[RMDB]
RNA sequence: GGGAACGACUCGAGUAGAGUCGAAAAGGAACAGUCACCUGAUACAAGCUGGGCAAAGGGCUAUGUUGUAGCUAUGCAAUCCAGUUCUUUGAAAGGUUGUCAGGUGUAUGUGGCUAAAGAUGGUAGAAUGAGUAUUCAAAAUCAAGCUUCCAGUACCUACGCUCACAAUAUUCGUAUUGUGAGCGUAAAAAGAAACAACAACAACAAC
Reactivity to DMS in 0.01 (KOAc 150mM, MgCl2 10mM, bicine 150mM(pH8.5), 24C), signal-to-noise 3, nucleotides 027 to 156: g010g000a130a080c030a060g020u000c030a050c010c020u000g020a070u000a050c130a070a090g020c010u000g000g000g000c020a020a030a040g010g020g010c010u000a060u000g010u020u000g050u010a070g020c240u020a140u000g010c010a070a050u000c300c060a050g020u000u000c030u030u000u000g020a030a250a230g030g000u010u000g000u000c010a020g020g040u000g000u000a010u000g020u020g030g030c030u000a070a110a080g010a100u000g020g000u020a110g020a080a080u000g010a180g000u010a200u000u000c060a050a000a100a060u000c010a040a120g010c000u000u010c030c010a130g020u000a140c050c020
Reactivity to 2A3 in 0.01 (KOAc 150mM, MgCl2 10mM, bicine 150mM(pH8.5), 24C), signal-to-noise 4, nucleotides 027 to 156: g030g000a030a020c010a030g090u040c000a000c000c000u010g010a010u030a100c080a030a030g000c010u060g030g060g070c030a040a020a060g050g010g000c030u020a040u150g120u110u080g040u000a050g050c070u110a070u230g050c030a000a020u060c010c050a020g050u070u020c030u050u050u080g090a150a100a030g060g010u060u060g020u020c000a000g000g010u000g020u010a020u040g060u020g030g000c020u070a140a070a020g040a030u060g010g060u080a050g030a050a050u130g090a090g090u230a070u080u060c030a020a040a000a100u020c050a040a010g000c000u040u000c010c000a020g050u100a050c060c000